[RMDB]
RNA sequence: GGGAACGACUCGAGUAGAGUCGAAAAGAUAUGGACCGGUAGCAAGCUGCAUAUCGGAAACGAUAUGAUAGUGAUGACCUACCCGGUCCUAAGUCAAAACAGCCCGUGGCUUCGGCCACGGGCUGAACCACUAUACCAAGUUCGCUUGGUAUAGUGGAAAAGAAACAACAACAACAAC
Reactivity to 2A3 in 0.01 (KOAc 150mM, MgCl2 10mM, bicine 150mM(pH8.5), 24C), signal-to-noise 2, nucleotides 027 to 126: g000a000u020a010u030g000g000a000c000c000g000g000u000a010g010c030a050a000g020c010u010g000c000a000u000a000u000c000g000g020a000a000a010c000g000a010u010a010u020g110a160u130a070g010u010g160a300u010g000a020c000c000u020a020c050c150c080g000g010u030c010c000u010a000a000g020u000c000a000a000a030a290c000a000g040c000c020c100g060u030g070g010c090u230u200c300g180g020c020c040a020c060g000g240g000c020u000g000a000a020
Reactivity to DMS in 0.01 (KOAc 150mM, MgCl2 10mM, bicine 150mM(pH8.5), 24C), signal-to-noise 1, nucleotides 027 to 126: g000a010u000a000u010g000g000a000c000c010g000g010u010a000g010c010a040a030g020c010u010g000c010a020u010a000u000c000g000g000a010a000a010c000g010a020u020a000u000g030a080u010a020g080u010g020a120u020g000a030c300c010u000a000c150c100c010g000g000u010c010c010u010a000a070g000u000c010a080a020a230a220c010a030g060c030c000c140g200u000g000g060c030u010u010c300g060g020c050c000a020c000g030g020g030c040u000g010a020a130
The record gives the reactivity of an RNA of 177 nucleotides to 2A3 and DMS. For DMS, 1,212 sequencing reads were counted. The 2A3 profile rests on 3,940 reads. Reactivities are given for positions 27 through 126.